[RMDB]
RNA sequence: GGGAACGACUCGAGUAGAGUCGAAAAGCAAAAUGUAAUCUUAACAUUGAUUUAACCUGCAUUUCUGUGUUUGCCAAGGAAGUUGUGCGUCUCUUCAUUACUUAGCAGCCAUUCAAGUUUAAAUAAAGAGCUUACAUGGGUUCGCCUAUGUGAGCUCAAAAGAAACAACAACAACAAC
Reactivity to 2A3 in 0.01 (KOAc 150mM, MgCl2 10mM, bicine 150mM(pH8.5), 24C), signal-to-noise 7, nucleotides 027 to 126: g060c030a060a080a020a060u080g030u100a080a060u070c070u130u160a070a050c030a120u070u140g040a050u090u100u100a050a080c000c000u010g000c040a070u020u080u060c070u070g060u000g040u050u090u070g050c010c010a030a020g090g030a050a040g040u140u080g030u070g050c020g050u020c020u000c000u080u010c010a050u040u060a050c020u010u040a020g030c010a010g010c020c020a060u100u130c060a110a050g060u060u080u190a020a140a030u120a050a140a000
Reactivity to DMS in 0.01 (KOAc 150mM, MgCl2 10mM, bicine 150mM(pH8.5), 24C), signal-to-noise 7, nucleotides 027 to 126: g020c120a060a060a050a030u010g010u010a050a090u020c090u020u030a100a060c060a070u010u010g000a100u030u010u010a080a100c090c030u000g000c060a040u010u010u000c050u000g010u020g010u010u000u010g010c030c040a050a090g000g010a070a080g020u010u000g020u000g000c050g010u000c010u010c020u010u000c060a060u010u020a080c040u020u000a080g030c050a040g000c010c040a050u010u020c120a050a090g010u000u000u010a030a070a100u040a030a130a100